[RMDB]
RNA sequence: GGGAACGACUCGAGUAGAGUCGAAAAUAUGUCGUUCGCGACAUAAAAAAGCGUACUACCGAAGAGGCAUUGUCAGUUGGAUGUCCCAAAUAGGACAUACAACUUGGAUUUAUGCUCCCCACCUUCGGUAUCGCAAAAACCCAUAUUCGUAUGGGAACCGUUAAACUUAGUUCGCUAAGUUUAACGGAAAAGAAACAACAACAACAAC
Reactivity to DMS in 0.01 (KOAc 150mM, MgCl2 10mM, bicine 150mM(pH8.5), 24C), signal-to-noise 2, nucleotides 027 to 156: u010a010u010g000u010c000g020u020u000c280g060c000g000a060c010a020u010a000a030a100a090a070a150g020c010g010u010a080c150u000a040c000c000g000a040a030g010a300g020g010c010a030u000u000g010u000c000a040g040u000u000g000g000a000u000g000u000c000c010c010a040a160a220u000a050g000g010a030c010a010u000a000c020a000a010c000u000u000g030g010a060u000u010u000a010u000g010c020u010c190c130c060c000a300c210c010u000u000c010g000g000u000a040u000c000g010c030a070a040a050a100a080c000c000c000a020u000a050u000u000c240g010u000a030u000g000g020g000a060a060
Reactivity to 2A3 in 0.01 (KOAc 150mM, MgCl2 10mM, bicine 150mM(pH8.5), 24C), signal-to-noise 5, nucleotides 027 to 156: u140a010u010g000u000c010g010u030u130c230g000c030g120a010c040a000u100a010a130a000a010a020a000g060c030g020u090a080c030u020a000c060c000g000a010a000g010a000g020g000c000a010u010u020g020u010c000a000g020u000u000g000g020a010u010g010u010c000c040c000a150a220a030u260a100g010g000a000c000a010u020a010c000a000a020c000u060u150g120g000a030u160u300u220a010u030g000c010u120c060c000c010c000a020c000c010u000u000c000g000g000u020a020u120c030g010c020a010a030a040a060a060c000c000c020a010u010a010u010u090c150g050u030a010u030g000g000g070a030a050